[RMDB]
RNA sequence: GGGAACGACUCGAGUAGAGUCGAAAAGACCGGGCGGACAUAUUAGUAUCUGCUGGAGAACCGCCAUCUACUUUGCAUCGUUCUUUUGUGUACAAAUUUUUAAAGGAGCGGUGUUGAUGGCACUACGCGAAUGAUGGUGAUUCGUCACCAUCAUUCGAAAAGAAACAACAACAACAAC
Reactivity to 2A3 in 0.01 (KOAc 150mM, MgCl2 10mM, bicine 150mM(pH8.5), 24C), signal-to-noise 7, nucleotides 027 to 126: g080a010c000c020g040g020g020c000g010g010a010c060a050u300a090u170u220a100g060u070a070u060c000u010g020c020u050g030g020a060g040a060a050c050c040g000c000c010a000u010c000u060a160c070u090u130u220g000c000a010u000c010g010u000u010c000u020u030u020u010g130u020g030u040a100c090a050a220a150u100u120u110u180u230a040a050a020g010g000a010g000c000g000g000u000g010u010u050g000a010u000g010g000c040a030c070u110a050c090g040
Reactivity to DMS in 0.01 (KOAc 150mM, MgCl2 10mM, bicine 150mM(pH8.5), 24C), signal-to-noise 4, nucleotides 027 to 126: g000a170c030c010g000g020g020c000g000g010a040c060a100u000a130u030u020a100g040u010a200u010c020u000g010c020u010g000g020a110g010a130a140c150c060g020c000c000a020u010c020u020a110c210u010u030u030g000c000a010u000c000g020u000u010c020u000u000u000u000g010u030g000u020a160c290a060a080a080u030u020u020u000u020a030a000a020g020g000a030g000c010g020g000u010g000u000u000g000a010u010g000g010c020a140c150u030a090c230g040
Source: RMDB libraries RFM100 and RFMREP, as collected in RNAgym.
The record gives the reactivity of an RNA of 177 nucleotides to 2A3 and DMS.
Values cover nucleotides 27 to 126.
Conditions: 150 mM KOAc, 10 mM MgCl2 and 150 mM bicine (pH 8.5), 24 C.